[RMDB]
RNA sequence: GGGAACGACUCGAGUAGAGUCGAAAAGGAACUAUGUUCAAAGACGAAGCCUCCACGUCAUCGUUUCGACGUCUGUAGACAGAUGAGCAUAGUUAAGAUCUGGAGGAGGCACGGAUCAAAAUAAAAACGUGCAUGUUGUGUUCGCACAACAUGUACGAAAAGAAACAACAACAACAAC
Reactivity to DMS in 0.01 (KOAc 150mM, MgCl2 10mM, bicine 150mM(pH8.5), 24C), signal-to-noise 5, nucleotides 027 to 126: g010g020a020a010c000u010a000u000g000u000u000c000a010a140a100g000a010c000g010a100a210g030c000c000u010c010c030a300c020g000u000c010a130u050c020g000u000u010u010c100g020a080c090g010u000c030u000g000u040a150g010a050c030a070g010a100u010g010a000g000c000a010u010a010g000u000u000a060a060g000a010u000c000u000g010g010a160g010g020a000g000g000c000a140c000g000g000a020u000c010a120a060a050a090u060a030a040a070a050a110
Reactivity to 2A3 in 0.01 (KOAc 150mM, MgCl2 10mM, bicine 150mM(pH8.5), 24C), signal-to-noise 8, nucleotides 027 to 126: g130g010a010a000c000u000a000u010g000u000u010c010a050a050a080g010a000c000g020a050a010g000c000c000u000c000c000a020c000g010u000c020a090u120c010g040u020u070u100c130g060a070c030g030u000c020u030g090u040a080g050a180c030a000g030a020u010g000a000g000c000a000u000a000g000u000u030a080a020g000a000u000c000u010g010g010a060g020g000a000g000g030c010a000c000g000g010a000u010c020a000a050a020a020u240a020a050a010a010a010